The record gives the reactivity of an RNA of 177 nucleotides to DMS and 2A3. For 2A3, 8,065 sequencing reads were counted. The reactions ran in a buffer of 150 mM KOAc, 10 mM MgCl2 and 150 mM bicine (pH 8.5), at 24 C. Reactivities are given for positions 27 through 126. DMS adducts were read by reverse transcription with MarathonRT.
[RMDB]
RNA sequence: GGGAACGACUCGAGUAGAGUCGAAAAAUACAGAAAGAGGAAGAUAGAGAAACAAAGAAAAGAUGGCAGAGAAGAAUGUAGUUAAGAACUGUGGCGGGGAAGGCGCGCCGCGGUAACUUUCCCGUACCAUGCAGUAUCCAUUCGUGGAUACUGCAUGAAAAGAAACAACAACAACAAC
Reactivity to DMS in 0.01 (KOAc 150mM, MgCl2 10mM, bicine 150mM(pH8.5), 24C), signal-to-noise 6, nucleotides 027 to 126: a080u030a070c120a110g010a060a050a020g000a090g010g000a060a040g000a070u020a070g000a060g010a120a070a060c150a050a080a060g000a070a070a060a050g010a040u000g000g010c110a080g010a040g010a040a040g000a050a040u010g010u000a030g000u000u010a040a040g000a060a050c070u010g020u010g000g000c010g020g000g000g000a030a030g010g000c070g000c050g010c050c040g020c020g010g010u010a030a050c040u010u000u000c000c000c000g010u020a070c160
Reactivity to 2A3 in 0.01 (KOAc 150mM, MgCl2 10mM, bicine 150mM(pH8.5), 24C), signal-to-noise 6, nucleotides 027 to 126: a000u100a010c040a010g090a030a090a000g070a030g080g010a050a030g030a050u170a050g070a000g040a070a080a010c070a040a140a030g070a060a060a010a010g040a050u060g030g030c050a010g010a000g010a090a010g010a030a020u080g030u060a030g000u070u110a060a040g030a090a010c030u040g010u040g050g000c000g020g000g000g030a030a030g060g000c040g000c020g030c050c040g010c010g020g010u030a040a030c000u030u010u000c000c000c010g010u020a090c040